[RMDB]
RNA sequence: GGGAACGACUCGAGUAGAGUCGAAAAUAUAAGAUGAAAACGGGACUUACAAACUUGUGUAGGUAUUAUUGCCUAGUGAUGCUGUUUGUGAAAGGAUUCUAAUAACUGAUAACUAACCAGCCAGUAGGUUAUGUCAUCGAUUCGUCGAUGACAUAACAAAAGAAACAACAACAACAAC
Reactivity to DMS in 0.01 (KOAc 150mM, MgCl2 10mM, bicine 150mM(pH8.5), 24C), signal-to-noise 3, nucleotides 027 to 126: u030a090u030a050a060g010a110u030g000a060a040a090a110c080g010g010g000a060c040u000u010a040c040a020a060a110c080u020u010g050u040g000u010a000g020g020u000a030u030u030a090u030u010g000c000c020u010a050g000u030g030a120u000g000c040u000g000u000u000u010g000u000g020a060a100a110g010g000a140u010u000c020u010a040a100u030a090a070c070u020g010a070u000a100a050c140u010a060a090c060c060a080g000c110c030a040g010u020a030g010
Reactivity to 2A3 in 0.01 (KOAc 150mM, MgCl2 10mM, bicine 150mM(pH8.5), 24C), signal-to-noise 5, nucleotides 027 to 126: u190a010u070a000a040g110a080u190g110a010a050a020a010c070g020g070g060a030c020u030u020a000c020a030a040a000c030u130u200g030u010g030u110a010g000g050u010a060u170u150a130u270u250g020c010c000u010a010g060u040g280a120u220g000c020u030g030u000u040u020g060u010g100a060a020a010g020g010a040u100u000c020u060a070a040u090a180a090c030u040g040a040u020a160a060c060u020a070a030c020c010a010g090c020c040a030g080u080a040g090